[RMDB]
Chemical mapping of a 207-nucleotide RNA with 2A3.
2A3 adducts were read by reverse transcription with SuperScript II with manganese.
Source: RMDB library OK3TST, as collected in RNAgym.
The 2A3 profile rests on 601 reads.
The RNA was probed in 150 mM KOAc, 10 mM MgCl2 and 150 mM bicine (pH 8.5) at 24 C.
RNA sequence: GGGAACGACUCGAGUAGAGUCGAAAAUGGGCGUGGUGACACGCAUUAGUUAAUCAGCUACUCCCAGCUACUCAGAAGGCUGAGGUGGAAGGAUUGCUUGAGGACUGCUUUAGCCUGGGAGUUCGAGGUCAUAGUGAGUUAUGAUCGAGUCACUGCAGUAGGUGAUACGUUUCGACGUAUCACCUACAAAAGAAACAACAACAACAAC
Reactivity to 2A3 in 0.01 (KOAc 150mM, MgCl2 10mM, bicine 150mM(pH8.5), 24C), signal-to-noise 1, nucleotides 027 to 156: u210g100g030g000c000g010u010g000g000u050g000a020c000a000c070g010c020a040u010u040a000g030u000u160a010a070u170c030a000g080c000u030a020c000u000c000c000c000a000g000c050u050a080c010u020c050a020g000a160a050g200g030c010u000g010a040g010g050u070g000g000a090a050g070g050a160u170u110g120c090u040u150g060a040g030g030a040c010u040g000c000u090u060u120a010g000c000c000u020g000g050g020a070g000u070u090c110g030a000g000g020u010c000a040u000a010g040u120g300a080g000u160u040a040u020g020a050u020c010g000a000g020u070c070a000c080u060g030c010a000